An RNA of 177 nucleotides, treated with DMS and read out base by base. Reactivities are given for positions 27 through 126. The data come from the RNA Mapping Database (RMDB), library OK2TRN. In probing experiments dimethyl sulfate is read out at A N1 and C N3, which are open when not base-paired. The reactions ran in a buffer of 150 mM KOAc, 10 mM MgCl2 and 150 mM bicine (pH 8.5), at 24 C. DMS adducts were read by reverse transcription with MarathonRT.
RNA sequence: GGGAACGACUCGAGUAGAGUCGAAAAGGAUCACCAUUACGCUUUUACUCAACUCUUUAAGUGUUUCAUUCGGAUGGAUUUAUCAAGAUGCCUAAACCCUUCCAGGUGUCCAAAGACAUAAGUUCAAUAGUCUACUACACUUCGGUGUAGUAGACUAAAAAGAAACAACAACAACAAC
Reactivity to DMS in 0.01 (KOAc 150mM, MgCl2 10mM, bicine 150mM(pH8.5), 24C), signal-to-noise 1, nucleotides 027 to 126: g040g000a030u000c130a070c010c120a090u010u000a090c090g040c020u000u000u000u010a090c040u000c060a060a090c080u010c070u000u000u000a060a060g010u010g000u000u000u000c110a040u010u010c100g070g000a050u020g050g000a060u010u000u000a040u010c090a070a090g020a080u000g020c060c050u000a060a080a080c060c010c000u000u040c080c060a050g000g010u000g000u000c000c070a090a130a030g010a080c060a060u000a020a080g000u000u000c040a030a110